[RMDB]
Structure probing data (DMS and 2A3) for a 177-nucleotide construct. For 2A3, 3,819 sequencing reads were counted. For DMS, 1,512 sequencing reads were counted. The RNA was probed in 150 mM KOAc, 10 mM MgCl2 and 150 mM bicine (pH 8.5) at 24 C. For DMS the reverse transcriptase was MarathonRT.

RNA sequence: GGGAACGACUCGAGUAGAGUCGAAAAGAUAUGGAUGUAGCCGAGGGAGCUACGCAAUCGGAAACGAUUGAUGUAGCAUCGAUCUCGGAACUACUACAUCCUAAGUCAAACGAUCCUUCGGGAUCGACUACUCUGAAACCUUCGGGUUUCAGAGUAGAAAAGAAACAACAACAACAAC
Reactivity to DMS in 0.01 (KOAc 150mM, MgCl2 10mM, bicine 150mM(pH8.5), 24C), signal-to-noise 2, nucleotides 027 to 126: g060a040u010a300u000g000g000a020u000g010u000a030g030c000c010g000a030g020g000g000a060g000c010u000a000c000g000c010a020a000u000c000g010g030a090a100a200c000g000a010u000u000g020a050u030g040u010a000g030c000a280u000c210g000a030u020c000u010c000g000g000a040a030c130u010a300c050u000a010c010a000u000c000c020u000a030a050g010u000c030a050a100a190c040g000a020u000c010c000u000u010c230g010g000g000a000u000c000g000a080
Reactivity to 2A3 in 0.01 (KOAc 150mM, MgCl2 10mM, bicine 150mM(pH8.5), 24C), signal-to-noise 2, nucleotides 027 to 126: g040a030u080a000u140g010g000a000u020g010u010a000g000c000c000g000a010g000g020g000a060g010c000u000a000c010g000c000a000a000u000c000g020g050a040a030a020c010g010a000u000u040g160a200u140g030u010a000g000c020a100u300c030g040a080u010c000u000c000g030g060a010a010c040u270a030c000u000a000c010a000u000c000c000u020a070a030g040u030c020a050a090a090c060g000a010u010c030c000u030u060c300g130g010g000a010u000c000g000a070